RNA sequence: GGGAACGACUCGAGUAGAGUCGAAAAGCUCGGAUACAGUGGAGGUGAUUUACUGGGCAUCUUAGAGAGCAGAGGAAUAAAGGCCCGGAUAACUCACGUCGACACAGAGUCCUACUUCAUUGUACUCUCUCAGAUAAAUAUUCGUAUUUAUCUGAGAAAAAGAAACAACAACAACAAC
Reactivity to 2A3 in 0.01 (KOAc 150mM, MgCl2 10mM, bicine 150mM(pH8.5), 24C), signal-to-noise 9, nucleotides 027 to 126: g040c020u030c040g040g000a070u070a070c060a060g010u020g030g040a050g030g010u020g020a020u010u020u030a030c000u010g010g010g000c020a120u080c090u070u200a130g030a040g010a020g160c070a040g060a070g110g060a110a060u160a240a150a060g060g000c000c000c000g010g010a060u000a010a010c010u000c010a010c020g230u090c060g070a020c010a010c030a090g100a020g070u010c010c010u040a080c020u040u070c030a090u030u060g010u050a060c020u000c000
Reactivity to DMS in 0.01 (KOAc 150mM, MgCl2 10mM, bicine 150mM(pH8.5), 24C), signal-to-noise 5, nucleotides 027 to 126: g010c020u010c030g050g010a100u010a010c120a050g010u000g010g000a040g000g010u010g000a040u000u000u000a030c000u010g010g000g010c000a070u050c050u000u030a120g010a150g010a120g010c070a120g030a060g010g010a120a150u030a030a150a110g000g000c000c030c010g010g010a040u010a030a030c080u000c010a010c020g000u030c280g010a080c030a080c190a120g010a140g010u000c010c100u010a300c060u010u020c070a060u000u000g000u010a010c070u010c080